RNA sequence: GGGAACGACUCGAGUAGAGUCGAAAAGCAGGGAGUGAGUGUCACAACAGCCUUGCAUUGGAUUCACGGUGGCAGGUGGCCCAGGGGUGGGCCGGUGUGGGAGGGUUGUCCUGGGCAGACCACACCCCACUUCGCGUCAUUUCGAUGACGCGAAGUGAAAAGAAACAACAACAACAAC
Reactivity to DMS in 0.01 (KOAc 150mM, MgCl2 10mM, bicine 150mM(pH8.5), 24C), signal-to-noise 1, nucleotides 027 to 126: g000c040a030g070g040g010a170g060u000g010a120g010u000g000u020c090a040c110a130a110c100a190g030c010c020u000u000g000c050a110u040u000g000g000a080u000u010c070a100c170g000g020u000g010g020c050a100g020g000u000g000g000c000c000c010a060g010g000g000g020u000g000g000g010c050c120g010g000u010g000u000g010g000g000a070g010g000g050u000u020g010u020c050c000u010g050g010g000c020a080g000a070c000c010a090c030a070c030c010c130
Reactivity to 2A3 in 0.01 (KOAc 150mM, MgCl2 10mM, bicine 150mM(pH8.5), 24C), signal-to-noise 1, nucleotides 027 to 126: g090c070a030g000g050g030a050g060u120g010a040g040u080g140u150c060a040c020a050a080c020a050g100c000c000u020u000g030c010a010u020u240g090g020a050u070u140c070a030c130g010g010u020g010g070c100a030g050g000u010g050g050c000c010c000a030g040g010g030g020u120g000g040g070c070c080g000g050u220g000u200g030g040g150a200g010g010g000u240u080g040u030c000c000u030g000g040g000c050a030g060a030c000c020a000c010a010c040c000c000